[RMDB]
RNA sequence: GGGAACGACUCGAGUAGAGUCGAAAAAAUGGUGGAUGCAAGGAGGUUCUUUUUGUCUAAUUAACUGUUCACAUUCAUCAUAAUUGAUUCCAUACAGUAUGCAUGGAUUUUCAGGGUCCAAGUGUUAACCAACUUCAGUGGACUUAAACCACUCUGACGGACUAGGACUAUUCGUAGUCCUAGUCCGAAAAGAAACAACAACAACAAC
Reactivity to 2A3 in 0.01 (KOAc 150mM, MgCl2 10mM, bicine 150mM(pH8.5), 24C), signal-to-noise 1, nucleotides 027 to 156: a010a000u030g000g000u010g000g030a010u050g000c110a010a030g120g010a050g000g000u080u110c070u090u260u190u180u100g170u070c140u120a110a120u050u090a040a000c030u040g040u050u000c020a050c000a110u020u020c010a000u000c000a000u000a070a210u070u110g040a050u010u030c000c000a020u090a040c080a020g100u220a050u230g000c090a050u020g020g010a020u020u020u000u100c030a020g130g000g000u000c030c000a130a060g050u050g030u120u050a040a090c100c040a020a010c000u140u170c130a040g080u010g000g000a010c000u060u050a180a000a000c000c000a000c050u040c020u050g000a060